Description
An RNA of 207 nucleotides, treated with DMS and 2A3 and read out base by base. For DMS, 1,998 sequencing reads were counted. The RNA was probed in 150 mM KOAc, 10 mM MgCl2 and 150 mM bicine (pH 8.5) at 24 C.
RNA sequence: GGGAACGACUCGAGUAGAGUCGAAAACGAAGGAAAGCUUGACCAGCUAAUCUUCUGCAACGCCAUUACGAGGACUGCCCUUAGAGGAUCAUGGCGAUAGGUCACCCCGCCGGUCGGUCAGCUGCUUAUACCCGUGCACGGUUCGCCGUGCACGGAAACAAUCAUGCAUCUUCGGAUGCAUGAUUGUAAAAGAAACAACAACAACAAC
Reactivity to DMS in 0.01 (KOAc 150mM, MgCl2 10mM, bicine 150mM(pH8.5), 24C), signal-to-noise 1, nucleotides 027 to 156: c040g020a110a020g010g000a090a140a100g030c020u000u000g020a100c070c000a270g010c000u000a080a120u020c000u000u000c000u000g020c020a100a090c040g060c020c000a120u000u000a030c210g020a120g000g010a070c020u000g000c000c030c020u010u010a050g010a160g020g010a060u010c030a050u010g000g020c000g030a070u000a070g050g010u020c040a100c030c010c000c040g000c060c050g050g040u000c020g000g000u000c030a160g070c000u000g040c000u020u010a140u000a110c130c000c000g000u000g010c040a030c000g040g000u010u000c300g010c020c020g060u000g000c000a000c000g050g010a010a030
Reactivity to 2A3 in 0.01 (KOAc 150mM, MgCl2 10mM, bicine 150mM(pH8.5), 24C), signal-to-noise 2, nucleotides 027 to 156: c010g010a020a000g050g070a300a070a000g000c000u020u070g050a030c000c000a000g000c000u020a050a040u070c010u040u000c040u080g040c070a100a010c020g010c030c000a050u060u040a040c070g010a070g020g050a070c080u110g060c050c000c000u020u090a040g050a100g140g010a030u070c030a040u090g010g000c000g020a040u120a070g050g010u120c050a110c040c020c000c000g010c010c020g030g070u050c000g010g020u040c040a010g020c050u110g000c030u120u020a050u080a150c010c000c000g010u000g000c000a000c000g010g150u030u040c190g050c080c000g000u010g000c000a000c010g000g010a000a010